An RNA of 177 nucleotides, treated with DMS and 2A3 and read out base by base. Reactivities are given for positions 27 through 126. The RNA was probed in 150 mM KOAc, 10 mM MgCl2 and 150 mM bicine (pH 8.5) at 24 C. The data come from the RNA Mapping Database (RMDB), library TTRDES.
[RMDB]
RNA sequence: GGGAACGACUCGAGUAGAGUCGAAAAGAUAUGGAACUUACUUGACAUGAAUAGUGUCGGAAACGACACGGGUUCAACAGCAAGGAGUUCCUAAGUCAAAACUGAGAUUAGUUCGCUAAUCUCAGAAGCAUUUUUUAAUGUUCGCAUUAAAAAAUGCAAAAGAAACAACAACAACAAC
Reactivity to DMS in 0.01 (KOAc 150mM, MgCl2 10mM, bicine 150mM(pH8.5), 24C), signal-to-noise 3, nucleotides 027 to 126: g010a030u010a170u000g010g010a010a020c000u000u000a100c000u000u000g010a070c100a250u020g000a010a010u000a290g010u000g010u000c010g010g000a020a040a070c000g010a010c000a000c010g000g020g010u000u000c010a100a100c200a170g000c000a020a000g000g000a030g010u000u000c000c000u000a030a080g000u020c010a110a070a150a280c020u000g020a020g000a010u000u000a000g000u010u010c300g020c000u000a010a000u000c000u000c000a000g000a080a140
Reactivity to 2A3 in 0.01 (KOAc 150mM, MgCl2 10mM, bicine 150mM(pH8.5), 24C), signal-to-noise 3, nucleotides 027 to 126: g000a010u010a030u040g000g010a020a010c010u000u300a270c000u080u000g070a080c020a300u300g000a010a000u030a040g010u020g000u010c000g000g000a020a030a000c000g010a000c010a010c000g050g120g020u070u020c150a300a170c090a220g030c000a000a010g000g000a000g010u000u000c000c000u010a040a000g000u010c010a020a030a180a250c020u000g000a000g000a010u010u000a000g050u060u090c290g000c220u000a000a010u010c000u010c010a000g000a010a010